This 207-nucleotide RNA was probed chemically with 2A3. Reactivities are rounded to 0.1 and cut off at 0 and 3.
RNA sequence: GGGAACGACUCGAGUAGAGUCGAAAAAUUCGCACGAUCAACAAUGCGCCCAAGGGCGAGGAGCUGACCGUGACGAUCACCUCCGAGAAGCUCUAUGCGCUGGGGCUUAAUUCGGUCAACACCCUCAAGAUCACCGUCACGGACGGCAAGGGCGGUAACACACUCAUCCAUUCGUGGAUGAGUGUGUAAAAGAAACAACAACAACAAC
Reactivity to 2A3 in 0.01 (KOAc 150mM, MgCl2 10mM, bicine 150mM(pH8.5), 24C), signal-to-noise 1, nucleotides 027 to 156: a000u050u090c100g020c040a140c070g100a130u040c040a000a130c030a070a050u210g110c000g070c000c000c000a080a220g100g010g010c020g020a050g000g070a030g010c010u010g070a070c000c000g000u000g030a070c000g030a010u120c130a010c000c010u050c010c010g050a030g000a010a000g050c010u000c000u000a030u150g160c200g050c030u000g000g000g050g000c000u000u010a090a070u080u020c010g040g010u060c010a060a060c020a150c130c000c000u000c010a020a020g040a080u030c020a050c100c000g000u000c000a050c110g080g030a020c020g000g000c000a000a030g000g000g000c000g000g000u010a000